[RMDB]
Chemical mapping of a 177-nucleotide RNA with DMS and 2A3. Reactivities are given for positions 27 through 126. Values are in units of 0.01, from 0 to 300, in steps of 10. The 2A3 profile rests on 38,749 reads. The RNA was probed in 150 mM KOAc, 10 mM MgCl2 and 150 mM bicine (pH 8.5) at 24 C. For 2A3 the reverse transcriptase was SuperScript II with manganese.

RNA sequence: GGGAACGACUCGAGUAGAGUCGAAAAGAUAUGGAAGGAACUACAGCGAAACAAGGCGUUGAAAUCGGAAACGAUGGAGCCUUGUAGUAGCUGCCUUCCUAAGUCAAAACCGUCCUUCGGGACGGAAUCCUACUAUAUUGUUCGCAAUAUAGUAGGAAAAAGAAACAACAACAACAAC
Reactivity to DMS in 0.01 (KOAc 150mM, MgCl2 10mM, bicine 150mM(pH8.5), 24C), signal-to-noise 8, nucleotides 027 to 126: g000a030u010a300u000g000g000a010a010g000g000a110a030c070u020a300c010a030g010c010g010a230a230a150c000a010a010g010g000c010g010u000u010g010a080a120a020u000c010g000g000a080a090a160c000g010a010u000g000g000a130g020c010c000u000u000g000u000a010g000u000a100g000c000u000g010c000c010u000u010c000c000u000a020a090g010u010c020a100a060a100a150c000c000g000u000c000c000u000u010c190g030g010g000a010c000g010g000a020a020
Reactivity to 2A3 in 0.01 (KOAc 150mM, MgCl2 10mM, bicine 150mM(pH8.5), 24C), signal-to-noise 8, nucleotides 027 to 126: g010a020u060a030u120g000g010a000a020g040g010a040a010c080u180a060c300a000g000c010g010a040a010a010c000a010a000g010g000c030g240u300u080g020a060a050a010u010c000g010g000a060a040a030c000g000a010u020g020g020a010g000c000c000u000u000g000u010a000g000u010a000g000c000u000g000c000c000u000u000c000c010u010a110a010g020u000c010a000a030a110a190c010c000g000u010c000c010u040u130c280g110g000g010a000c000g000g000a000a020